[RMDB]
RNA sequence: GGGAACGACUCGAGUAGAGUCGAAAACACAAUUCCCUAAGCGAUGAGAAGCGUGUGGAAAAUUAGGGAAGGGCUACGGCUAUAAUCCUAAGAAAGCUUAUCUACAAGCGGAGGUAUUCUCAGAACGAAAACCAUUUGGCGUUCGCGCCAAAUGGAACACUAACGAAAACUUCGGUUUUCGUUAGUGAAAAGAAACAACAACAACAAC
Reactivity to DMS in 0.01 (KOAc 150mM, MgCl2 10mM, bicine 150mM(pH8.5), 24C), signal-to-noise 2, nucleotides 027 to 156: c090a080c130a150a150u000u010c000c000c020u000a120a210g020c000g000a210u000g010a080g030a050a040g000c070g020u000g010u010g030g030a060a070a110a160u000u000a050g010g030g020a130a100g000g010g030c030u000a060c140g040g000c030u000a080u010a060a150u000c000c010u000a050a070g010a050a100a120g020c050u000u000a070u000c040u000a100c030a060a020g010c020g030g010a070g040g020u000a110u000u000c030u000c010a110g000a090a110c030g000a050a040a060a140c000c000a010u000u000u000g020g020c010g030u000u000c300g020c000g050c040c000a000a000a000u000g000g010a010a040
Reactivity to 2A3 in 0.01 (KOAc 150mM, MgCl2 10mM, bicine 150mM(pH8.5), 24C), signal-to-noise 6, nucleotides 027 to 156: c100a010c030a030a080u020u020c020c000c000u030a130a020g030c040g070a050u030g020a020g010a080a020g060c050g000u070g020u080g070g010a050a110a060a110u060u040a040g010g010g020a030a080g090g010g000c010u050a020c130g040g000c010u010a020u050a190a080u110c010c010u030a050a020g070a060a080a010g040c030u070u080a050u110c040u070a050c050a110a010g020c030g040g030a040g020g070u070a150u090u020c020u010c010a040g040a080a020c060g060a040a040a050a080c000c000a000u000u000u000g000g000c010g010u030u060c180g010c000g000c070c000a000a000a000u000g000g000a000a000